Record summary: This 177-nucleotide RNA was probed chemically with 2A3 and DMS. Conditions: 150 mM KOAc, 10 mM MgCl2 and 150 mM bicine (pH 8.5), 24 C.
[RMDB]
RNA sequence: GGGAACGACUCGAGUAGAGUCGAAAAAGUUUAGAUUUCGAUCUAAACUAGACCACUAAGAGGAUGACGAGUGACUACGACGCAUCUAGUAGAAUCCGCCCAGCUGUGAGCAGUUCGCUGCUCACAAGCCCAUGUGGUUUUUCGAAACCACAUGGGCAAAAGAAACAACAACAACAAC
Reactivity to 2A3 in 0.01 (KOAc 150mM, MgCl2 10mM, bicine 150mM(pH8.5), 24C), signal-to-noise 2, nucleotides 027 to 126: a000g030u000u000u010a030g000a030u070u120u130c180g070a010u010c000u010a000a000a000c000u000a000g060a060c010c030a000c090u040a130a030g050a020g230g000a050u040g030a080c050g020a010g120u100g120a120c030u040a040c080g140a010c040g000c060a040u010c000u020a020g000u020a020g080a040a060u010c030c020g000c040c000c000a020g040c070u020g010u000g010a000g000c010a000g010u020u070c150g030c090u000g000c010u000c000a010c000a000a020
Reactivity to DMS in 0.01 (KOAc 150mM, MgCl2 10mM, bicine 150mM(pH8.5), 24C), signal-to-noise 2, nucleotides 027 to 126: a020g010u010u000u000a010g000a020u010u000u040c220g010a020u000c000u000a000a020a000c000u000a070g000a170c050c010a110c150u020a050a130g000a100g010g020a060u010g010a190c060g000a220g000u000g000a170c070u010a070c020g000a130c190g000c080a030u010c030u000a130g020u010a070g000a100a110u000c110c070g030c030c000c060a090g020c080u000g000u000g000a010g010c000a020g020u000u000c300g020c000u000g020c000u000c000a000c000a020a100
Overview:
The data come from the RNA Mapping Database (RMDB), library M2PK50. 2A3 adducts were read by reverse transcription with SuperScript II with manganese. For 2A3, 1,552 sequencing reads were counted.